[RMDB]
RNA sequence: GGGAACGACUCGAGUAGAGUCGAAAAACACUGAAGCUGGUCACCGUCAUAUCGGUCACUGACCGCGACGGCAAUCCGGUCUCGGACGUCGACUGGCUGGAGAACGGGAUCGUUGAACGCGCCGAGGGGUUCCCUCCCUACGUGGAAGUCACGUUCGAUAGCUAUCCAAAUUCGUUUGGAUAGCUAUAAAAGAAACAACAACAACAAC
Reactivity to 2A3 in 0.01 (KOAc 150mM, MgCl2 10mM, bicine 150mM(pH8.5), 24C), signal-to-noise 2, nucleotides 027 to 156: a000c160a040c090u180g040a080a010g010c020u020g000g020u080c030a030c050c020g000u000c000a070u100a170u210c040g000g000u090c090a150c300u260g010a020c000c000g050c050g010a060c010g010g010c050a070a000u020c020c010g050g020u040c100u060c060g030g010a050c070g050u100c090g010a030c010u050g050g000c040u040g030g010a090g010a030a030c010g000g030g050a080u080c050g010u020u110g110a110a050c010g020c060g040c060c160g040a060g000g020g010g000u030u010c000c000c000u030c010c000c010u030a030c010g010u030g060g090a090a010g050u100c010a000c020g010u020u060c010g040
Reactivity to DMS in 0.01 (KOAc 150mM, MgCl2 10mM, bicine 150mM(pH8.5), 24C), signal-to-noise 2, nucleotides 027 to 156: a080c070a170c030u020g000a110a060g020c010u000g000g010u010c060a180c020c000g010u000c010a300u000a090u000c020g040g000u010c000a210c150u000g020a000c000c010g040c140g030a040c010g010g000c060a090a050u000c020c000g050g000u010c060u010c020g020g010a070c120g020u010c080g020a040c020u000g020g030c020u000g000g000a200g020a030a080c010g000g010g010a040u000c030g000u010u000g000a090a110c050g020c010g010c030c260g000a050g010g010g000g020u000u000c030c010c000u010c020c000c020u000a030c010g010u000g020g000a120a130g000u000c020a020c050g030u000u000c020g000

The record gives the reactivity of an RNA of 207 nucleotides to 2A3 and DMS. The RNA was probed in 150 mM KOAc, 10 mM MgCl2 and 150 mM bicine (pH 8.5) at 24 C. 2A3 is a SHAPE reagent: it acylates the 2'-hydroxyl of flexible nucleotides of all four kinds. For DMS, 6,095 sequencing reads were counted. Reactivities are given for positions 27 through 156. For DMS the reverse transcriptase was MarathonRT. The data come from the RNA Mapping Database (RMDB), library OK3TST.